Source: RMDB library OK2TRN, as collected in RNAgym.
Chemical mapping of a 177-nucleotide RNA with 2A3 and DMS.
For DMS, 1,004 sequencing reads were counted.
The RNA was probed in 150 mM KOAc, 10 mM MgCl2 and 150 mM bicine (pH 8.5) at 24 C.
Values are in units of 0.01, from 0 to 300, in steps of 10.
For 2A3, 1,077 sequencing reads were counted.
2A3 adducts were read by reverse transcription with SuperScript II with manganese.
RNA sequence: GGGAACGACUCGAGUAGAGUCGAAAAUUGGCACCCAGGCGCUGUCAUGGGAGGCCGCCCUUAGAAGAUAUUGGCCUAGAGCCUUUGAUGCAAGGGUCGGCAUCAGGGUCACAGCAUGCUGCAGCGGUCGAAACAGCACUUUCGAGUGCUGUUUCGAAAAAGAAACAACAACAACAAC
Reactivity to 2A3 in 0.01 (KOAc 150mM, MgCl2 10mM, bicine 150mM(pH8.5), 24C), signal-to-noise 1, nucleotides 027 to 126: u060u040g050g000c040a010c040c030c050a080g030g050c050g000c050u060g000u020c060a100u050g080g000g030a090g000g060c010c050g000c000c010c000u020u010a090g010a130a010g000a060u080a070u200u080g010g000c020c030u060a110g030a060g130c080c000u030u060u030g040a040u070g040c000a020a010g000g030g010u170c060g010g030c000a010u010c010a060g090g000g000u060c020a000c030a100g060c010a020u060g010c020u010g010c000a000g070c060g010g000
Reactivity to DMS in 0.01 (KOAc 150mM, MgCl2 10mM, bicine 150mM(pH8.5), 24C), signal-to-noise 1, nucleotides 027 to 126: u000u000g040g020c060a060c080c030c050a180g010g010c060g040c020u000g010u000c070a090u000g000g000g000a070g000g050c030c040g000c020c020c010u020u000a080g020a090a080g000a200u010a020u000u000g020g010c000c000u020a140g000a250g000c010c000u000u000u000g000a110u010g000c010a030a040g000g000g030u000c050g010g000c010a030u010c040a060g000g010g000u000c070a080c120a100g030c030a060u000g010c130u010g020c020a040g000c020g010g010